Structure probing data (2A3 and DMS) for a 177-nucleotide construct.
RNA sequence: GGGAACGACUCGAGUAGAGUCGAAAAACAAUUCUUAAACUUGUUCAAUAGCAUGCCCUCUGAAAUUGGUUUAGGCUGGGAGGGGUUCAUUGAAGCUAAACAAAUCCUACAGGGGCUAAAUAGGGAGAUCUAACCUAAACUUCGGUUUAGGUUAGAUAAAAGAAACAACAACAACAAC
Reactivity to 2A3 in 0.01 (KOAc 150mM, MgCl2 10mM, bicine 150mM(pH8.5), 24C), signal-to-noise 2, nucleotides 027 to 126: a020c040a050a080u160u150c050u190u250a190a140a110c070u040u060g020u110u090c030a090a150u060a070g040c020a000u080g050c000c020c000u110c050u050g040a100a120a120u110u070g020g050u050u060u060a070g000g030c030u030g040g060g030a080g070g000g020g000u090u160c000a040u050u170g100a050a010g030c050u050a070a000a000c020a040a090a030u110c010c010u070a060c030a010g010g000g040g050c030u050a020a050a060u080a060g030g000g030a090g020
Reactivity to DMS in 0.01 (KOAc 150mM, MgCl2 10mM, bicine 150mM(pH8.5), 24C), signal-to-noise 4, nucleotides 027 to 126: a060c100a060a120u010u000c090u000u000a070a090a160c080u010u000g010u000u000c090a060a100u010a060g020c070a100u010g000c030c000c020u000c050u000g010a060a060a060u010u000g020g010u000u000u000a040g020g000c060u010g000g000g010a080g010g000g010g000u000u010c090a060u000u000g000a090a050g010c040u000a030a030a040c050a040a040a050u000c040c020u000a130c050a060g000g000g010g010c040u000a040a050a060u000a060g000g020g010a100g000
Background:
Values cover nucleotides 27 to 126. It was measured as part of the RMDB library OK2TRN.